An RNA of 177 nucleotides, treated with DMS and 2A3 and read out base by base. It was measured as part of the RMDB library 15KREP. For DMS the reverse transcriptase was MarathonRT. The DMS profile rests on 4,775 reads. Reactivities are given for positions 27 through 126. The RNA was probed in 150 mM KOAc, 10 mM MgCl2 and 150 mM bicine (pH 8.5) at 24 C. For 2A3, 4,796 sequencing reads were counted.

[RMDB]
RNA sequence: GGGAACGACUCGAGUAGAGUCGAAAAAUUACAGUUAUAAACAAUGUGGACAAUGAAAUUGUUAAGUCUUCAGAUGUUGUAGACAGCAAUGAAAAUUUAACAUGGCCACUUGUUUUAGAAUGCACUACCUUUAGAGUAUGUUCGCAUACUCUAAAGGAAAAGAAACAACAACAACAAC
Reactivity to DMS in 0.01 (KOAc 150mM, MgCl2 10mM, bicine 150mM(pH8.5), 24C), signal-to-noise 4, nucleotides 027 to 126: a090u000u010a090c070a090g000u000u010a110u010a020a020a010c000a000a010u010g040u000g000g000a020c050a090a120u010g020a090a120a080u020u000g010u010u000a010a010g010u000c020u000u000c000a000g000a210u000g010u000u010g020u010a160g010a170c060a020g010c020a020a120u000g000a000a010a010a020u000u000u000a010a010c000a040u000g010g010c000c010a000c010u000u000g010u000u000u000u000a080g010a050a070u000g010c110a090c170u000a140
Reactivity to 2A3 in 0.01 (KOAc 150mM, MgCl2 10mM, bicine 150mM(pH8.5), 24C), signal-to-noise 4, nucleotides 027 to 126: a000u220u150a060c030a060g030u070u100a090u070a110a000a000c020a020a040u240g010u020g010g010a000c030a060a110u210g070a170a080a080u080u020g000u000u010a020a000g000u000c020u000u010c010a040g070a300u050g040u070u000g020u030a100g050a250c010a000g000c000a000a010u000g010a000a000a010a010u000u030u020a010a010c020a030u020g030g000c000c010a000c000u000u000g010u000u010u000u010a010g010a050a020u120g040c030a020c060u070a070